[RMDB]
RNA sequence: GGGAACGACUCGAGUAGAGUCGAAAAAACUCAGAACUCAUGCACUCAGAGGGAAAAGUAACUGUACUCUUCCCCUCCUAAUUAAGUUCAGGCGUAAGGGUCGAGAGAGAGGCAAAGGAACUUCAAAUAUAGGCAAUGAGUUCGCUCAUUGCCUAUAAAAAGAAACAACAACAACAAC
Reactivity to DMS in 0.01 (KOAc 150mM, MgCl2 10mM, bicine 150mM(pH8.5), 24C), signal-to-noise 1, nucleotides 027 to 126: a080a080c000u010c040a100g010a100a080c030u000c040a160u000g000c010a040c070u000c080a070g060a080g000g000g000a000a000a000a000g010u000a020a110c240u030g000u000a060c000u000c060u000u000c010c000c000c010u000c040c080u000a020a120u000u000a020a100g000u000u000c040a080g000g020c180g060u000a080a070g020g000g000u000c040g020a120g030a120g000a060g000a080g000g000c080a020a110a040g000g000a000a100c120u020u000c070a080a120a240